An RNA of 207 nucleotides, treated with 2A3 and read out base by base. The 2A3 profile rests on 940 reads. 2A3 adducts were read by reverse transcription with SuperScript II with manganese.
RNA sequence: GGGAACGACUCGAGUAGAGUCGAAAAGGCGCUGGCCGCCACCGACAGCCUGACGCUGACCGGGCGCCAAGGUAAGCCGUACCCGCCCGGCCAGUUCCGCAUCAACGGCAGCGCGUACCCAACGAAGGUCUACGGGGCGCUGUCGGUGAGCUGGGCGUCGGGCGAUAAUUUUCGAAUUAUCGCCCGAAAAAGAAACAACAACAACAAC
Reactivity to 2A3 in 0.01 (KOAc 150mM, MgCl2 10mM, bicine 150mM(pH8.5), 24C), signal-to-noise 1, nucleotides 027 to 156: g000g000c000g020c040u060g010g050c000c050g000c020c020a000c010c010g040a040c030a020g020c000c030u190g070a040c060g020c010u000g030a020c050c000g000g000g010c000g000c090c100a030a000g040g000u080a050a060g100c050c080g020u000a000c020c000c010g000c000c020c000g010g000c000c000a030g000u060u010c070c020g050c020a130u020c010a050a030c010g010g010c000a000g000c000g010c020g070u120a110c000c000c010a020a020c070g140a210a050g100g030u050c030u180a090c080g000g010g010g030c020g010c020u000g000u000c000g000g000u000g010a010g010c050u130g000g050g000c000g010
Notes:
It was measured as part of the RMDB library OK3TST.